Structure probing data (DMS and 2A3) for a 177-nucleotide construct. Values are in units of 0.01, from 0 to 300, in steps of 10. Reactivities are given for positions 27 through 126. The RNA was probed in 150 mM KOAc, 10 mM MgCl2 and 150 mM bicine (pH 8.5) at 24 C. Source: RMDB library OK2TST, as collected in RNAgym. The DMS profile rests on 4,563 reads. DMS adducts were read by reverse transcription with MarathonRT. For 2A3 the reverse transcriptase was SuperScript II with manganese. For 2A3, 3,699 sequencing reads were counted.
[RMDB]
RNA sequence: GGGAACGACUCGAGUAGAGUCGAAAAGAAAUUGGAUAAGAAAGUGACGAUGCGCAACUUCCGUCCAUCAAUCUACAUCGAAGGUUGCGCCGCGUGGGACGAGGACAAAUGGGCCGAAAUUCGCAUACUCCGUGAUAAAUUUCGAUUUAUCACGGAGAAAAGAAACAACAACAACAAC
Reactivity to DMS in 0.01 (KOAc 150mM, MgCl2 10mM, bicine 150mM(pH8.5), 24C), signal-to-noise 5, nucleotides 027 to 126: g020a060a080a070u000u010g010g020a100u010a070a110g010a080a060a060g020u010g000a100c060g010a090u010g000c010g020c030a040a020c010u000u000c020c030g000u000c070c070a050u000c170a080a100u000c110u000a110c180a090u000c030g010a040a010g000g000u000u000g000c040g030c020c080g010c050g030u000g000g010g020a060c100g000a100g010g000a070c110a020a050a130u010g010g000g010c040c070g000a030a060a120u010u000c050g020c110a110u010a170
Reactivity to 2A3 in 0.01 (KOAc 150mM, MgCl2 10mM, bicine 150mM(pH8.5), 24C), signal-to-noise 3, nucleotides 027 to 126: g030a000a120a000u160u110g040g030a040u050a130a080g060a090a090a010g100u070g050a020c020g030a040u100g010c020g000c010a010a020c000u040u000c030c000g040u020c010c030a070u100c050a010a090u020c050u130a070c050a090u120c050g030a040a020g010g000u010u000g000c010g000c010c020g000c030g010u050g030g020g000a020c030g010a030g020g020a010c030a030a140a060u100g020g040g000c020c000g040a050a030a030u120u100c020g000c040a010u050a080